[RMDB]
RNA sequence: GGGAACGACUCGAGUAGAGUCGAAAAACAAAGAGAUGACGUCCAUUUCCAAGAGUCGGAAUAUCCCCAUCACUAUGCAUUGCGCCGAAGCCCCUGCGGACCGCAUGUUCUUUGUGAGUCAGGGACAUACGGCCAUGUCGUAUUGUGACUCGGUGGAUACAUUACUUUGCUUCGGCAAAGUAAUGUAAAAAGAAACAACAACAACAAC
Reactivity to DMS in 0.01 (KOAc 150mM, MgCl2 10mM, bicine 150mM(pH8.5), 24C), signal-to-noise 3, nucleotides 027 to 156: a070c040a090a130a120g010a150g000a080u010g010a090c040g010u000c040c020a160u000u010u000c020c060a140a110g000a110g010u010c030g010g020a120a100u010a100u000c000c000c000c020a080u000c030a060c040u000a040u000g000c000a100u000u000g020c070g030c000c000g020a300a240g000c030c000c010c020u000g000c090g000g000a040c040c030g000c010a030u010g010u000u020c110u010u010u020g030u000g010a190g010u000c030a030g000g010g000a010c010a060u000a200c000g000g040c000c020a050u000g000u000c040g030u000a080u000u000g020u000g000a070c040u000c030g010g010u000g040g010a260
Reactivity to 2A3 in 0.01 (KOAc 150mM, MgCl2 10mM, bicine 150mM(pH8.5), 24C), signal-to-noise 4, nucleotides 027 to 156: a000c080a010a070a000g110a010g010a050u120g050a040c040g140u020c020c030a060u050u050u040c020c000a080a030g020a010g070u040c060g010g050a090a040u100a040u080c010c000c000c000a000u020c000a000c010u030a010u020g000c030a060u010u120g060c090g000c050c000g040a070a030g000c000c000c000c000u010g010c020g030g060a040c010c010g000c000a000u030g130u240u130c160u150u110u060g010u010g020a060g040u050c010a000g000g010g020a000c000a010u300a010c010g000g000c000c010a010u020g030u020c030g040u050a040u070u110g010u010g020a000c020u040c150g100g020u220g060g000a010

The record gives the reactivity of an RNA of 207 nucleotides to DMS and 2A3.
The reactions ran in a buffer of 150 mM KOAc, 10 mM MgCl2 and 150 mM bicine (pH 8.5), at 24 C.
Reactivities are given for positions 27 through 156.
The data come from the RNA Mapping Database (RMDB), library OK3TST.